[RMDB]
RNA sequence: GGGAACGACUCGAGUAGAGUCGAAAAACAAAGCGAACGACUCGAGUAGAGUCGAAAAGGGAACGACUCGAGUAGAGUCGAAAAGGGAACGACACGAGUAGAGUCGAACGCAACCCAACCCAAAAAAGAUGAAAGAAGGAUUCGUCCUUCUUUCAUCAAAAGAAACAACAACAACAAC
Reactivity to DMS in 0.01 (KOAc 150mM, MgCl2 10mM, bicine 150mM(pH8.5), 24C), signal-to-noise 4, nucleotides 027 to 126: a100c120a060a130a110g000c280g000a020a170c000g000a000c000u010c000g020a070g020u000a090g000a010g020u000c000g020a010a010a070a050g000g000g010a060a120c010g000a010c000u000c000g000a090g000u000a070g010a000g000u000c000g000a010a030a060a100g000g020g010a110a240c010g010a050c010a040c030g000a140g020u000a170g000a050g010u000c010g020a030a250c030g010c040a080a120c020c000c010a060a110c020c010c000a000a030a080a040a060a100
Reactivity to 2A3 in 0.01 (KOAc 150mM, MgCl2 10mM, bicine 150mM(pH8.5), 24C), signal-to-noise 3, nucleotides 027 to 126: a000c090a020a130a040g010c300g010a000a000c000g000a000c010u010c010g010a000g040u020a010g010a010g000u000c000g000a000a000a000a010g020g010g000a030a000c000g000a000c000u000c000g010a020g060u100a010g030a000g000u000c000g000a000a000a000a000g050g010g010a040a030c000g010a000c020a150c050g040a020g050u100a030g030a000g000u000c000g000a030a000c040g030c030a020a070c000c000c020a010a060c010c000c040a040a100a020a010a010a020